[RMDB]
RNA sequence: GGGAACGACUCGAGUAGAGUCGAAAAGUCCGAUUUGGGGCACUUGCAGAUUUGUAAGGCCACGCACGGCGGGGAGACAGGCCGACGCGGGGGCUGCUCUAAAAAUUUAAGGGCCCUACGGUCCACAAACAGCACAACAGUUCGCUGUUGUGCUGUUAAAAGAAACAACAACAACAAC
Reactivity to DMS in 0.01 (KOAc 150mM, MgCl2 10mM, bicine 150mM(pH8.5), 24C), signal-to-noise 1, nucleotides 027 to 126: g000u000c000c000g050a160u030u000u020g000g000g020g020c020a150c000u000u000g020c120a110g000a150u010u010u000g000u010a060a080g000g000c000c000a040c000g030c020a090c040g020g030c020g000g000g000g050a160g010a160c060a080g000g000c000c010g030a070c120g030c020g000g000g000g000g000c010u000g020c140u000c070u010a000a030a050a050a040u000u010u000a050a030g000g000g000c000c000c040u010a060c140g000g050u000c000c030a080c140a050
Reactivity to 2A3 in 0.01 (KOAc 150mM, MgCl2 10mM, bicine 150mM(pH8.5), 24C), signal-to-noise 3, nucleotides 027 to 126: g010u010c000c000g010a020u130u060u180g020g000g000g010c020a040c030u000u060g070c040a060g020a300u130u130u100g070u100a120a000g020g000c000c000a000c010g020c010a020c000g000g010c020g040g060g060g050a130g030a130c080a080g160g020c010c020g020a080c080g050c000g020g060g020g000g000c030u030g020c000u010c000u030a150a220a040a000a010u050u160u140a030a060g010g010g000c020c000c000u020a010c030g010g000u000c020c000a030c010a030